[RMDB]
RNA sequence: GGGAACGACUCGAGUAGAGUCGAAAAGAUGAUUUUAAUAACAUGUUCUACAACCACCAUUUAAAGUGUCCAUGGACGGUGGGAAUAACUAAAUUCUAUCAAGGAUGGGAUAGACUACUCACAUCUCGCGUAGUUAACGUUUCGACGUUAACUACGCAAAAGAAACAACAACAACAAC
Reactivity to 2A3 in 0.01 (KOAc 150mM, MgCl2 10mM, bicine 150mM(pH8.5), 24C), signal-to-noise 3, nucleotides 027 to 126: g110a000u070g050a060u020u130u160u280a200a090u140a090a070c070a050u140g020u050u030c030u060a080c000a050a050c000c050a000c000c000a010u010u010u300a140a070a000g020u030g030u090c010c010a070u120g060g070a000c070g030g010u020g000g000g030a050a020u060a010a010c110u090a000a090a090u120u010c020u030a010u030c040a110a060g110g010a060u060g020g030g000a000u000a090g010a000c030u120a020c000u000c000a060c040a110u110c020u050c040
Reactivity to DMS in 0.01 (KOAc 150mM, MgCl2 10mM, bicine 150mM(pH8.5), 24C), signal-to-noise 1, nucleotides 027 to 126: g000a080u000g000a080u000u070u070u030a000a170u030a090a080c060a020u000g000u000u000c050u000a060c010a060a000c050c000a040c000c000a060u050u140u000a110a110a210g000u020g000u020c000c020a130u000g020g000a050c140g000g030u000g030g020g000a110a080u020a140a000c120u110a040a070a050u030u000c060u010a020u000c000a230a110g110g000a120u000g000g000g000a100u000a120g000a000c000u000a060c090u010c020a100c130a090u000c000u020c070
Structure probing data (2A3 and DMS) for a 177-nucleotide construct.
The reactions ran in a buffer of 150 mM KOAc, 10 mM MgCl2 and 150 mM bicine (pH 8.5), at 24 C.